[RMDB]
RNA sequence: GGGAACGACUCGAGUAGAGUCGAAAACCCACGACUUUCGAGUCGUGGGAAAUAUAAUCAGCGGUAAAUAAUUAGCUCCGCUUACCGCUGAAGCGGAGGAUACACGUCUAGGAUUCGUCCUAGACAACACCCUAAGACGAUUCGUCGUCUUAGGGUGAAAAGAAACAACAACAACAAC
Reactivity to DMS in 0.01 (KOAc 150mM, MgCl2 10mM, bicine 150mM(pH8.5), 24C), signal-to-noise 2, nucleotides 027 to 126: c000c000c000a010c000g010a010c000u000u000u020c130g040a000g010u000c000g040u000g000g030g000a010a020a030u010a100u020a080a130u000c010a020g020c010g010g010u020a040a040a040u000a070a080u010u010a110g020c010u000c000c010g000c020u000u020a060c040c000g000c010u000g020a030a030g010c000g000g000a040g000g010a170u010a070c200a100c230g000u000c010u010a000g000g000a030u000u000c190g000u000c000c000u000a010g000a000c000a050a110
Reactivity to 2A3 in 0.01 (KOAc 150mM, MgCl2 10mM, bicine 150mM(pH8.5), 24C), signal-to-noise 4, nucleotides 027 to 126: c000c000c010a000c000g010a010c010u090u080u150c170g110a010g010u010c000g010u020g000g000g010a020a080a000u260a020u050a060a140u030c010a000g010c010g140g200u190a060a070a060u120a060a090u160u160a090g060c000u010c010c020g000c030u000u010a140c000c000g000c020u010g000a000a000g000c000g020g000a010g000g020a060u120a170c130a010c160g000u010c010u010a000g000g000a010u000u040c160g070u040c050c000u010a000g000a000c000a000a000

An RNA of 177 nucleotides, treated with DMS and 2A3 and read out base by base. It was measured as part of the RMDB library M2PK50. Values cover nucleotides 27 to 126. Values are in units of 0.01, from 0 to 300, in steps of 10. The RNA was probed in 150 mM KOAc, 10 mM MgCl2 and 150 mM bicine (pH 8.5) at 24 C. For DMS the reverse transcriptase was MarathonRT.